The data come from the RNA Mapping Database (RMDB), library OK1LIB.
The record gives the reactivity of an RNA of 177 nucleotides to 2A3 and DMS.
For DMS, 2,285 sequencing reads were counted.
Conditions: 150 mM KOAc, 10 mM MgCl2 and 150 mM bicine (pH 8.5), 24 C.
For 2A3, 1,858 sequencing reads were counted.

RNA sequence: GGGAACGACUCGAGUAGAGUCGAAAAAGAAUGAUAUUUUUUAUUUGCUUAUGCUAUUUUACGAUCUAUUCCAAAUAAAUUAGGAGGAGUUAUUGCAUUAGUUUUAUCAAUUGCAAUUUUAAUAAUCUCACAUAGUUCGAUUCGUCGAACUAUGUGAAAAAGAAACAACAACAACAAC
Reactivity to 2A3 in 0.01 (KOAc 150mM, MgCl2 10mM, bicine 150mM(pH8.5), 24C), signal-to-noise 3, nucleotides 027 to 126: a000g150a040a030u200g030a090u150a160u070u140u060u030u050u070a160u100u090u080g000c010u010u020a010u030g000c000u020a030u090u080u050u100a040c040g060a080u030c020u060a160u060u070c010c000a130a110a060u200a080a080a160u230u130a050g010g020a010g000g020a020g010u070u050a020u050u070g000c000a000u000u030a010g060u000u080u160u210a050u060c060a030a060u170u010g090c040a070a040u020u100u120u070a100a110u120a020a040u060c040
Reactivity to DMS in 0.01 (KOAc 150mM, MgCl2 10mM, bicine 150mM(pH8.5), 24C), signal-to-noise 2, nucleotides 027 to 126: a060g000a070a040u040g000a090u030a000u000u020u070u010u000u000a070u050u010u040g000c040u000u050a010u040g010c030u010a010u010u010u030u030a000c110g010a100u040c110u000a060u030u030c000c040a060a080a180u010a010a060a050u020u050a160g020g000a140g000g000a100g000u000u000a020u000u000g000c020a000u010u000a030g010u020u000u030u000a050u030c070a020a020u000u000g010c000a050a060u000u020u030u050a020a090u000a070a130u040c140